[RMDB]
RNA sequence: GGGAACGACUCGAGUAGAGUCGAAAAUCUGGGAGCCAGCCCUGGGGAGGGACAGAGCCAGGGUCCCCUUCUGGACUGUGCAGGGCUAGGGCAGAGGGAAGGAGCGGGAGCCAGGGACGCACUGGCACGCGUAAGAAAGAUUCGUCUUUCUUACGCGAAAAGAAACAACAACAACAAC
Reactivity to 2A3 in 0.01 (KOAc 150mM, MgCl2 10mM, bicine 150mM(pH8.5), 24C), signal-to-noise 4, nucleotides 027 to 126: u020c020u030g000g000g040a020g030c010c000a000g010c030c000c000u010g020g000g000g040a080g010g040g000a000c000a020g090a020g030c020c010a010g020g000g040u030c040c020c010c000u070u000c000u030g050g030a040c030u070g030u130g080c020a020g000g000g000c040u060a100g050g040g000c030a030g050a080g080g020g020a120a210g060g020a160g030c220g000g000g020a020g010c030c000a020g000g000g040a090c070g000c050a050c050u000g000g000c010a020
Reactivity to DMS in 0.01 (KOAc 150mM, MgCl2 10mM, bicine 150mM(pH8.5), 24C), signal-to-noise 6, nucleotides 027 to 126: u000c030u000g010g000g020a250g000c030c020a080g010c010c000c000u000g000g010g010g020a070g010g010g000a040c030a050g010a180g010c010c030a020g000g000g000u010c070c070c170c020u000u000c010u000g010g000a070c040u000g010u000g010c020a040g000g000g020c020u000a100g020g010g010c020a100g020a130g000g000g010a150a120g000g000a130g010c140g010g000g000a110g000c020c020a020g000g010g010a110c110g020c130a090c010u000g000g000c020a200
The record gives the reactivity of an RNA of 177 nucleotides to 2A3 and DMS. The DMS profile rests on 9,077 reads. 2A3 adducts were read by reverse transcription with SuperScript II with manganese. The RNA was probed in 150 mM KOAc, 10 mM MgCl2 and 150 mM bicine (pH 8.5) at 24 C. Source: RMDB library OK2TRN, as collected in RNAgym.